[RMDB]
RNA sequence: GGGAACGACUCGAGUAGAGUCGAAAAGUGAAAGCUCCUUCUCUCGCAAGGUGUAACUCAUGAUUCUCAUGACCCCUGGUUGGAGAGAUCCGGACUAGGAGCCAGGGGGCCUCUGAUUCUGCCAGCCAAAACUGUCGUAAGUUCGCUUACGACAGAACUACUUCAUUGGAUUCGUCCAAUGAAGUAGAAAAGAAACAACAACAACAAC
Reactivity to 2A3 in 0.01 (KOAc 150mM, MgCl2 10mM, bicine 150mM(pH8.5), 24C), signal-to-noise 5, nucleotides 027 to 156: g040u040g030a100a030a040g020c010u050c010c000u050u000c050u010c010u040c050g040c090a010a020g000g000u040g020u090a080a050c030u010c040a020u050g050a170u180u040c070u030c060a040u090g100a130c000c000c000c010u010g010g040u050u100g100g030a090g010a030g010a090u020c010c030g050g080a080c080u130a080g030g010a010g000c000c000a010g010g000g000g000g000c020c010u040c010u050g070a110u090u020c000u070g010c010c030a050g020c040c020a030a060a050a120c020u010g000u000c000g000u000a010a010g000u030u120c230g010c120u000u000a000c000g000a000c000a000g000a000a000
Reactivity to DMS in 0.01 (KOAc 150mM, MgCl2 10mM, bicine 150mM(pH8.5), 24C), signal-to-noise 1, nucleotides 027 to 156: g030u000g010a040a130a190g020c020u000c030c040u000u000c010u000c030u010c060g000c110a170a060g000g030u000g010u010a050a120c100u010c010a060u010g000a080u010u010c060u000c000a080u000g000a050c030c040c000c020u010g020g060u000u030g050g020a100g020a280g000a130u000c080c000g050g010a160c100u000a080g000g010a080g000c020c010a060g000g000g060g010g020c060c010u000c000u000g000a140u010u000c050u000g040c060c020a090g020c050c020a020a050a080a140c020u000g010u000c000g000u010a000a050g000u000u000c300g020c020u010u000a000c000g010a000c000a000g010a010a080